[RMDB]
RNA sequence: GGGAACGACUCGAGUAGAGUCGAAAAACCACCUUACUACUGAUGAAGACACCAUUCCAGCGGACCACUGUGAUCCAAGAGGCAUUCAGCCAUCAUGAUGUGGCCUUUACCUCCACUCCUGUCUUGUAACAUACUGCAGGUUCGCCUGCAGUAUGUUAAAAGAAACAACAACAACAAC
Reactivity to 2A3 in 0.01 (KOAc 150mM, MgCl2 10mM, bicine 150mM(pH8.5), 24C), signal-to-noise 8, nucleotides 027 to 126: a000c030c000a050c020c010u050u110a050c030u020a020c020u040g080a060u080g040a160a010g050a030c000a020c040c000a040u090u040c020c020a020g030c020g060g010a060c010c010a040c040u070g020u050g080a040u040c040c000a060a030g050a040g090g020c030a040u090u090c030a060g010c030c010a040u050c020a050u150g100a100u120g050u050g050g010c000c000u030u050u080a050c000c020u010c010c020a020c030u010c010c010u050g020u040c010u030u020g040u030
Reactivity to DMS in 0.01 (KOAc 150mM, MgCl2 10mM, bicine 150mM(pH8.5), 24C), signal-to-noise 2, nucleotides 027 to 126: a080c020c030a100c040c030u000u000a090c070u010a070c040u000g000a080u000g010a100a080g030a080c010a070c020c030a110u000u010c030c030a060g010c010g000g000a080c000c020a100c050u000g020u000g010a070u030c050c000a030a070g040a080g000g020c050a060u010u010c100a100g000c080c010a030u010c060a090u010g000a110u000g010u000g000g010c060c050u000u010u000a100c090c010u000c000c030a080c050u000c010c060u020g000u000c060u020u000g040u010
Structure probing data (2A3 and DMS) for a 177-nucleotide construct. Reactivities are given for positions 27 through 126.